Chemical mapping of a 177-nucleotide RNA with 2A3 and DMS. 2A3 adducts were read by reverse transcription with SuperScript II with manganese. The data come from the RNA Mapping Database (RMDB), library M2PK90. Values cover nucleotides 27 to 126. The RNA was probed in 150 mM KOAc, 10 mM MgCl2 and 150 mM bicine (pH 8.5) at 24 C.
RNA sequence: GGGAACGACUCGAGUAGAGUCGAAAAUAUUAGGGUGUGAGAGUAUCUCUCUCCCAGCCGGUUCGCGCAGCCAUCUUUUACGACUUUACUUGGGUUAGCUGCGCGAACUGGCUGGCGUUCCCAGCAACCGAACAGUAUUGUUCGCAAUACUGUUCGGAAAAGAAACAACAACAACAAC
Reactivity to 2A3 in 0.01 (KOAc 150mM, MgCl2 10mM, bicine 150mM(pH8.5), 24C), signal-to-noise 3, nucleotides 027 to 126: u130a050u080u090a040g020g020g000u040g010u020g020a000g000a010g040u240a300u080c060u000c000u000c010u000c060c000c010a000g020c000c000g000g000u000u010c000g020c000g000c010a010g000c020c020a060u020c070u030u280u130u170a120c130g100a090c080u180u200u160a060c050u130u150g080g010g000u050u080a020g000c000u000g000c000g000c000g000a000a000c000u000g000g010c000u000g000g000c010g000u000u020c010c000c010a010g080c010a010a070
Reactivity to DMS in 0.01 (KOAc 150mM, MgCl2 10mM, bicine 150mM(pH8.5), 24C), signal-to-noise 2, nucleotides 027 to 126: u000a080u000u000a100g010g000g000u000g000u010g000a020g000a070g010u010a100u020c070u000c010u000c020u010c040c020c000a020g020c010c000g010g020u000u000c010g020c020g010c000a030g010c010c090a040u000c020u000u010u020u010a130c100g010a100c170u000u000u000a040c160u000u000g000g030g000u000u000a040g010c020u000g000c000g000c010g020a000a010c000u010g010g000c000u000g020g020c040g010u000u000c000c000c000a220g010c190a060a150